[RMDB]
Chemical mapping of a 207-nucleotide RNA with 2A3 and DMS. The RNA was probed in 150 mM KOAc, 10 mM MgCl2 and 150 mM bicine (pH 8.5) at 24 C. For DMS the reverse transcriptase was MarathonRT.
RNA sequence: GGGAACGACUCGAGUAGAGUCGAAAAAUUGUGGCGAGUGCCUCGUUCAGAACGUGCACGUCGGCCAUGAUUGAGCUGCUGCUUACGGUCAUCUGGUGGACGCCGCUCACAGGCACGUUGUUGCCGCUGGAGAACCACGCGGCUACCUGUCGUGCGGACGUCCAGAGAAGUUCGCUUCUCUGGACGUAAAAGAAACAACAACAACAAC
Reactivity to 2A3 in 0.01 (KOAc 150mM, MgCl2 10mM, bicine 150mM(pH8.5), 24C), signal-to-noise 3, nucleotides 027 to 156: a010u000u030g020u020g000g010c000g000a010g020u020g020c020c100u190c080g000u010u120c090a050g100a210a010c010g010u010g000c020a000c210g170u060c020g090g070c000c010a020u030g020a010u020u040g020a000g010c040u090g030c000u020g020c000u080u100a040c070g000g050u040c020a050u030c100u090g050g040u010g060g020a020c050g000c040c000g020c000u000c000a050c000a010g010g010c080a020c120g040u060u050g000u000u030g030c010c000g000c010u030g020g020a190g060a190a130c010c010a030c150g010c000g000g010c040u040a020c000c000u020g030u100c060g010u010g000c000g000g030
Reactivity to DMS in 0.01 (KOAc 150mM, MgCl2 10mM, bicine 150mM(pH8.5), 24C), signal-to-noise 2, nucleotides 027 to 156: a040u010u000g020u010g000g010c000g090a060g010u020g000c040c030u000c010g000u000u020c190a250g000a070a070c040g050u000g020c050a050c030g000u000c030g020g050c000c010a050u010g010a040u010u000g000a150g000c030u000g020c010u020g010c030u000u000a060c040g000g010u000c040a130u010c020u030g000g010u000g020g010a070c020g030c010c010g020c030u000c060a070c040a030g020g030c000a030c050g000u000u000g000u000u000g000c000c000g010c030u000g010g010a170g000a110a270c040c040a060c110g010c000g020g010c020u010a020c060c050u000g020u010c010g020u000g020c020g000g000
Background
It was measured as part of the RMDB library OK3TST.